Conditions: 150 mM KOAc, 10 mM MgCl2 and 150 mM bicine (pH 8.5), 24 C. This 177-nucleotide RNA was probed chemically with 2A3 and DMS. 2A3 is a SHAPE reagent: it acylates the 2'-hydroxyl of flexible nucleotides of all four kinds.
[RMDB]
RNA sequence: GGGAACGACUCGAGUAGAGUCGAAAAUCCUGCUAGUUCGCUAGCAGGAAAAACAAAACUGUACACGCAGUACAGAAAAACAAAAACAAAACAAAAUGCCUAAAAGCACAGGCUUCGGCCUGUGCAACACUAUCUACCUGUUCGCAGGUAGAUAGUGAAAAGAAACAACAACAACAAC
Reactivity to 2A3 in 0.01 (KOAc 150mM, MgCl2 10mM, bicine 150mM(pH8.5), 24C), signal-to-noise 4, nucleotides 027 to 126: u010c010c000u000g000c000u000a000g010u040u050c240g020c110u000a010g000c000a000g000g010a060a050a000a000a000c030a010a050a010a060c000u000g010u020a000c060a020c120g240c140a070g000u010a000c010a000g060a060a070a000a000a000c080a030a110a020a010a020c060a040a110a000a000c040a050a150a040a040u100g040c000c020u130a100a100a040a030g000c010a000c000a000g000g000c000u030u060c110g070g000c000c000u000g000u000g000c000a000a000
Reactivity to DMS in 0.01 (KOAc 150mM, MgCl2 10mM, bicine 150mM(pH8.5), 24C), signal-to-noise 2, nucleotides 027 to 126: u000c000c010u000g000c000u010a000g000u010u010c220g010c000u000a010g000c030a000g010g000a000a010a030a110a170c140a080a000a090a190c010u010g020u020a030c010a150c300g010c240a160g010u000a000c000a010g000a020a030a030a050a050c190a080a060a060a100a060c100a110a060a080a030c080a050a050a070a120u010g010c040c040u000a060a010a130a130g000c000a000c000a010g000g000c000u000u000c150g050g000c010c010u000g050u000g010c010a010a070